RNA sequence: GGGAACGACUCGAGUAGAGUCGAAAAGAGUAGUAGUUCGCUACUACUCAAAGGCACAAAAGGCACAGUUCAAAAGUGCAUGGAACACGCCAAGUGCCCGUGAAAGUAAAUCCUUCGGGAUUUACAAACAAUUUGCACAGUUCGCUGUGCAAAUUGUAAAAGAAACAACAACAACAAC
Reactivity to DMS in 0.01 (KOAc 150mM, MgCl2 10mM, bicine 150mM(pH8.5), 24C), signal-to-noise 1, nucleotides 027 to 126: g000a030g000u000a000g040u000a020g000u010u000c170g000c000u000a000c000u010a000c000u000c000a000a170a040g030g000c010a030c030a080a070a160a210g000g000c030a110c110a100g000u000u000c180a060a060a070a200g070u010g000c090a070u000g020g020a150a040c010a110c070g020c000c000a080a260g010u000g000c000c000c070g000u000g000a150a060a200g000u000a000a010a000u010c010c000u000u030c260g000g000g020a020u000u000u000a000c000a060a110
An RNA of 177 nucleotides, treated with DMS and read out base by base. For DMS, 600 sequencing reads were counted. Conditions: 150 mM KOAc, 10 mM MgCl2 and 150 mM bicine (pH 8.5), 24 C. Source: RMDB library M2PK50, as collected in RNAgym.